An RNA of 177 nucleotides, treated with 2A3 and DMS and read out base by base. High DMS reactivity at an A or C suggests that its Watson-Crick edge is free. Reactivities are rounded to 0.1 and cut off at 0 and 3. 2A3 adducts were read by reverse transcription with SuperScript II with manganese. Conditions: 150 mM KOAc, 10 mM MgCl2 and 150 mM bicine (pH 8.5), 24 C.

RNA sequence: GGGAACGACUCGAGUAGAGUCGAAAAGAGCCGACAGAGAAGUCGGGAAGCGACGAGAGAGAAUAGAACACAUUGGAAUUCGAGAUACUGUCACAAAAUGACAGACGUCGCCAUAUUCUCAGAGAAGCAGUGAUGCGGUAUUCGUACCGCAUCACUGAAAAGAAACAACAACAACAAC
Reactivity to 2A3 in 0.01 (KOAc 150mM, MgCl2 10mM, bicine 150mM(pH8.5), 24C), signal-to-noise 3, nucleotides 027 to 126: g090a020g090c000c020g000a000c000a010g240a000g020a190a030g000u000c000g030g000g030a010a040g000c030g000a000c000g010a010g010a020g010a010g040a160a000u060a060g140a260a000c070a010c030a150u100u280g040g030a060a050u100u080c120g000a060g020a090u050a120c000u010g000u000c000a000c090a090a110a000a010u100g000a030c000a000g020a060c000g000u000c010g000c000c000a040u060a060u050u000c010u010c010a060g020a010g010a180a030g050
Reactivity to DMS in 0.01 (KOAc 150mM, MgCl2 10mM, bicine 150mM(pH8.5), 24C), signal-to-noise 3, nucleotides 027 to 126: g000a240g010c020c000g070a050c000a170g000a120g020a100a140g000u020c000g000g020g000a160a180g020c000g030a040c000g000a280g000a130g000a300g000a030a020u010a110g040a170a070c160a240c230a090u010u050g000g040a190a090u010u020c010g000a220g050a030u010a050c000u000g000u000c000a060c090a120a030a150a300u040g000a010c010a000g000a140c000g000u000c000g000c020c180a140u040a030u000u000c000u000c020a190g000a120g000a210a100g010